[RMDB]
RNA sequence: GGGAACGACUCGAGUAGAGUCGAAAAACUCAAGUUCAUCAAAGGCAAGUUUGAUUGCUUGUUUGUUAGCAUUGCUGAAAUAAUACACAAAAAGCCAGAGGAAGUCAUGAUGUUCAUUCCACAUAUCAUCCCGCACUCAAUUCGUUGAGUGCGGGAUAAAAGAAACAACAACAACAAC
Reactivity to 2A3 in 0.01 (KOAc 150mM, MgCl2 10mM, bicine 150mM(pH8.5), 24C), signal-to-noise 2, nucleotides 027 to 126: a000c000u040c000a000a050g010u010u020c020a060u060c040a060a090a000g060g040c020a010a030g060u000u000u030g180a300u090u040g020c000u000u000g090u080u100u000g050u160u180a070g000c140a170u000u290g050c000u070g080a050a060a050u270a000a060u200a040c110a000c030a060a150a000a000a000g000c020c000a020g000a030g140g010a170a070g030u000c010a010u130g010a000u120g000u050u030c040a090u000u030c000c020a110c050a190u040a080u060c130
Reactivity to DMS in 0.01 (KOAc 150mM, MgCl2 10mM, bicine 150mM(pH8.5), 24C), signal-to-noise 1, nucleotides 027 to 126: a060c190u000c000a090a000g000u000u000c060a080u010c020a070a060a040g000g020c060a070a300g020u000u000u030g040a040u050u050g000c040u020u000g000u030u000u000g010u000u040a050g040c150a040u000u000g030c080u020g020a090a000a030u000a130a120u060a050c050a020c060a020a070a040a130a020g000c010c030a030g000a000g000g000a100a100g000u000c000a080u000g000a000u080g000u000u060c060a210u000u000c000c010a010c090a010u040a040u020c120